Structure probing data (2A3 and DMS) for a 177-nucleotide construct.
For DMS, 1,327 sequencing reads were counted.
It was measured as part of the RMDB library RFM100.
For 2A3 the reverse transcriptase was SuperScript II with manganese.
RNA sequence: GGGAACGACUCGAGUAGAGUCGAAAACGAUCGAAGGUGGUCCCGAGCCCUAGACAGCCGGGAGGUGAGCUUAGAAGCAGCUACCCUCUAAGAAAAGCGUAACAGCUUACCGGCCGAGGUUCGGGGCUUGUUGAGUCCUGUUCGCAGGACUCAACAAAAAAGAAACAACAACAACAAC
Reactivity to 2A3 in 0.01 (KOAc 150mM, MgCl2 10mM, bicine 150mM(pH8.5), 24C), signal-to-noise 2, nucleotides 027 to 126: c020g040a060u150c150g050a090a010g100g070u150g020g000u050c000c000c000g000a000g000c000c000c020u120a060g000a040c050a010g000c020c000g000g000g030a000g000g100u200g060a000g000c000u010u100a100g070a300a010g140c050a000g060c010u160a220c030c000c000u000c010u020a010a070g060a070a100a000a000g000c010g010u000a060a000c010a090g000c000u000u000a010c000c000g000g030c000c000g000a010g000g010u020u000c000g000g000g000g000c000
Reactivity to DMS in 0.01 (KOAc 150mM, MgCl2 10mM, bicine 150mM(pH8.5), 24C), signal-to-noise 2, nucleotides 027 to 126: c060g010a110u060c130g030a010a080g010g000u000g040g130u000c000c060c000g010a000g030c000c000c300u020a120g000a060c300a040g000c000c030g000g000g000a000g010g000u020g000a040g020c000u010u010a020g000a180a100g080c300a000g000c000u000a040c090c000c000u010c000u090a220a040g000a050a010a090a000g000c000g030u000a160a120c200a180g030c000u000u000a030c000c000g000g000c010c010g000a070g000g070u000u030c060g000g000g010g000c110